[RMDB]
Structure probing data (DMS and 2A3) for a 177-nucleotide construct. The 2A3 profile rests on 1,324 reads. 2A3 adducts were read by reverse transcription with SuperScript II with manganese. Source: RMDB library OK2TST, as collected in RNAgym.

RNA sequence: GGGAACGACUCGAGUAGAGUCGAAAAUCAGACUCAAGACUCCUGAGUAUCCAGAGGGAAGAGAGGUGGUCAUGAUCGCCAAUGACAUCACAGUGCAGGGUGGAUCGUUCGGAGUGGCGGAGGACCAACAUGAAAGUGUCUUCGGACACUUUCAUGUAAAAGAAACAACAACAACAAC
Reactivity to DMS in 0.01 (KOAc 150mM, MgCl2 10mM, bicine 150mM(pH8.5), 24C), signal-to-noise 3, nucleotides 027 to 126: u010c100a100g010a050c030u000c010a060a140g020a090c040u000c020c070u020g000a090g010u000a100u010c020c010a090g010a100g000g020g010a050a060g000a040g000a080g020g020u020g010g010u010c010a060u010g000a050u000c030g010c030c030a060a060u010g000a060c050a080u010c100a060c130a090g010u000g010c080a070g020g000g040u000g010g020a060u010c090g000u000u020c110g010g010a140g000u000g000g000c090g010g010a100g000g000a070c040c070a060
Reactivity to 2A3 in 0.01 (KOAc 150mM, MgCl2 10mM, bicine 150mM(pH8.5), 24C), signal-to-noise 1, nucleotides 027 to 126: u050c000a010g020a030c000u000c030a120a000g100a020c020u040c040c070u020g030a030g050u010a120u050c030c000a010g050a050g060g040g000a050a000g060a000g000a020g040g060u030g010g040u080c050a010u050g090a050u080c050g000c030c000a030a100u060g010a030c000a030u080c030a040c020a090g050u060g110c010a030g090g030g050u080g010g030a040u020c050g030u050u040c050g030g050a120g010u050g000g000c050g000g010a020g050g000a020c010c010a010